[RMDB]
RNA sequence: GGGAACGACUCGAGUAGAGUCGAAAAGAUCGAAGCUACUGCAACAAUUAACAGUGACGAAGUGUAUGAUUUCAGUGCCACUAUCAUUGAUGACGUAUUUGGCGUAGAUGAUGCAUUUAUAUUGCCUUAAUUAUACUAUACAACGCGCGUAGAUAUAUCCGGAUAACAAGUUCGCUUGUUAUCCGGAAAAAGAAACAACAACAACAAC
Reactivity to 2A3 in 0.01 (KOAc 150mM, MgCl2 10mM, bicine 150mM(pH8.5), 24C), signal-to-noise 3, nucleotides 027 to 156: g060a080u050c020g040a060a030g060c030u020a030c030u040g080c020a100a040c020a030a120u140u210a090a040c020a040g090u070g060a040c050g030a100a060g040u020g060u080a040u080g140a060u070u080u130c080a030g050u000g070c000c020a050c030u060a040u100c000a040u010u140g090a100u090g020a100c020g040u020a160u100u070u140g070g000c000g000u040a020g000a030u050g010a010u030g000c030a040u000u210u010a150u060a040u030u150g000c000c000u000u000a040a020u130u030a040u050a130c060u000a030u050a150c100a110a020c000g010c030g000c040g070u020a030g010a020u000a000u000a020
Reactivity to DMS in 0.01 (KOAc 150mM, MgCl2 10mM, bicine 150mM(pH8.5), 24C), signal-to-noise 1, nucleotides 027 to 156: g000a110u000c100g020a120a160g060c020u000a030c040u010g010c020a050a110c040a080a220u000u000a120a030c050a060g020u000g010a070c020g000a050a120g030u000g000u000a000u000g000a090u000u020u010c070a090g000u020g060c020c050a060c030u000a060u000c020a110u000u020g000a130u000g020a040c040g000u000a040u010u000u000g000g030c010g040u010a070g000a120u000g010a070u020g030c020a070u000u000u000a090u000a130u040u000g000c030c020u010u000a070a110u000u000a090u010a050c070u000a070u000a050c040a080a060c070g030c060g020c080g040u000a030g020a130u010a070u000a170
Source: RMDB library OK3TST, as collected in RNAgym. This 207-nucleotide RNA was probed chemically with 2A3 and DMS. The RNA was probed in 150 mM KOAc, 10 mM MgCl2 and 150 mM bicine (pH 8.5) at 24 C. For 2A3 the reverse transcriptase was SuperScript II with manganese. Reactivities are given for positions 27 through 156.